[RMDB]
Description:
Chemical mapping of a 177-nucleotide RNA with DMS and 2A3. Source: RMDB library OK2TRN, as collected in RNAgym.
RNA sequence: GGGAACGACUCGAGUAGAGUCGAAAAACAAGCAUACGUAUCAGUGCUACGAACCGUUCACGCGGUGAACCUGCUGGGCGCACAAGGAGAAUCGAUGGAUUACGCCAAACGCAUCGGCCAGGUUGGGCAUUCUGAGUGUCUUCGGACACUCAGAAUGAAAAGAAACAACAACAACAAC
Reactivity to DMS in 0.01 (KOAc 150mM, MgCl2 10mM, bicine 150mM(pH8.5), 24C), signal-to-noise 3, nucleotides 027 to 126: a070c140a130a110g010c060a040u000a090c160g020u010a070u010c120a130g020u020g030c050u010a100c140g000a110a060c030c010g000u000u000c190a080c180g020c050g030g000u000g000a030a050c040c020u000g000c020u000g010g010g010c010g000c100a080c130a080a120g000g000a050g010a030a020u000c020g010a200u030g010g010a050u000u000a080c080g000c010c030a060a100a070c060g010c010a040u010c040g000g000c080c050a010g000g010u000u000g000g040g000
Reactivity to 2A3 in 0.01 (KOAc 150mM, MgCl2 10mM, bicine 150mM(pH8.5), 24C), signal-to-noise 2, nucleotides 027 to 126: a000c050a070a030g020c030a060u050a110c100g180u240a140u220c100a090g040u000g100c030u090a050c060g110a030a040c030c000g000u150u160c070a040c120g030c000g000g050u040g050a020a010c000c020u000g000c010u030g020g020g000c030g020c020a030c040a090a130g010g000a050g040a000a060u030c030g050a140u230g190g010a030u160u080a080c030g000c030c000a090a060a030c030g020c020a110u130c030g050g040c120c020a000g020g040u030u010g010g060g000